[RMDB]
RNA sequence: GGGAACGACUCGAGUAGAGUCGAAAACUUAGCGUGGCGAACUGUGACACCGGGGCACAACGCUGACGCAGCGUAGCGAGCUGUCCUUCCAGUUUUUCCAGCAGCAGGGCGGUUUUCACGAUAAGACCUAGAUAAGGAUGUUCGCAUCCUUAUCUAGAAAAGAAACAACAACAACAAC
Reactivity to DMS in 0.01 (KOAc 150mM, MgCl2 10mM, bicine 150mM(pH8.5), 24C), signal-to-noise 9, nucleotides 027 to 126: c050u000u000a070g020c040g020u000g010g010c130g000a050a060c060u000g010u000g010a100c170a120c130c090g000g000g010g000c040a050c060a070a080c030g010c040u000g000a080c100g020c040a080g010c040g000u000a100g020c050g010a070g000c050u000g010u000c020c020u010u000c060c040a080g010u000u000u000u000u000c050c050a110g010c050a090g010c080a040g010g000g010c040g010g000u000u010u000u010c030a050c060g010a080u010a040a090g000a140c170
Reactivity to 2A3 in 0.01 (KOAc 150mM, MgCl2 10mM, bicine 150mM(pH8.5), 24C), signal-to-noise 5, nucleotides 027 to 126: c030u060u060a020g020c020g040u020g030g000c030g020a070a050c050u020g020u060g060a010c020a050c090c070g030g010g050g010c040a020c020a060a090c040g000c030u060g060a070c050g010c110a020g020c040g050u020a010g020c010g030a010g000c020u020g020u040c000c000u050u010c020c010a040g010u020u020u010u100u030c020c020a030g000c000a000g010c020a010g040g000g020c000g040g000u030u030u050u110c050a040c010g020a010u040a110a040g040a030c020

Chemical mapping of a 177-nucleotide RNA with DMS and 2A3. For 2A3 the reverse transcriptase was SuperScript II with manganese. Values are in units of 0.01, from 0 to 300, in steps of 10. The reactions ran in a buffer of 150 mM KOAc, 10 mM MgCl2 and 150 mM bicine (pH 8.5), at 24 C. Source: RMDB library OK2TST, as collected in RNAgym. For 2A3, 15,090 sequencing reads were counted. For DMS, 17,087 sequencing reads were counted.